[RMDB]
RNA sequence: GGGAACGACUCGAGUAGAGUCGAAAAUUCGGCUUCGGAUUCCUCAGCCCCCAGCCCCCCGAAGCAGUCGGGAUCGGGCCUGUACGCAGAACCUCGAUCCCCCUCCUGGGCCGACGCAAGUUGGUCCGAAUUGUAGUUGGUUCGCCAACUACAAUUCAAAAGAAACAACAACAACAAC
Reactivity to 2A3 in 0.01 (KOAc 150mM, MgCl2 10mM, bicine 150mM(pH8.5), 24C), signal-to-noise 1, nucleotides 027 to 126: u060u000c050g060g020c030u060u030c020g070g050a110u090u100c000c020u100c070a230g100c020c010c010c000c000a000g030c000c000c020c000c000c000g010a000a010g010c030a010g120u140c060g000g000g000a020u010c010g000g000g000c030c000u000g000u020a020c180g000c060a000g020a070a040c030c010u040c020g000a000u000c020c020c000c000c000u030c000c000u000g000g000g000c000c010g000a000c010g020c030a070a050g000u010u000g000g020u010c000c000
Reactivity to DMS in 0.01 (KOAc 150mM, MgCl2 10mM, bicine 150mM(pH8.5), 24C), signal-to-noise 4, nucleotides 027 to 126: u000u010c100g000g000c050u000u000c020g000g010a180u010u000c020c010u010c140a140g000c030c010c010c020c020a090g000c010c010c020c030c000c010g000a060a070g020c060a130g010u020c150g050g020g010a010u000c010g010g000g010c160c000u000g000u000a060c200g030c020a020g010a080a090c170c000u010c020g010a020u000c000c000c000c010c000u000c010c020u000g030g010g020c000c000g020a010c000g020c250a040a130g010u000u000g000g010u000c010c000
This 177-nucleotide RNA was probed chemically with 2A3 and DMS. Reactivities are given for positions 27 through 126. The RNA was probed in 150 mM KOAc, 10 mM MgCl2 and 150 mM bicine (pH 8.5) at 24 C. 2A3 adducts were read by reverse transcription with SuperScript II with manganese. The 2A3 profile rests on 1,796 reads. DMS adducts were read by reverse transcription with MarathonRT.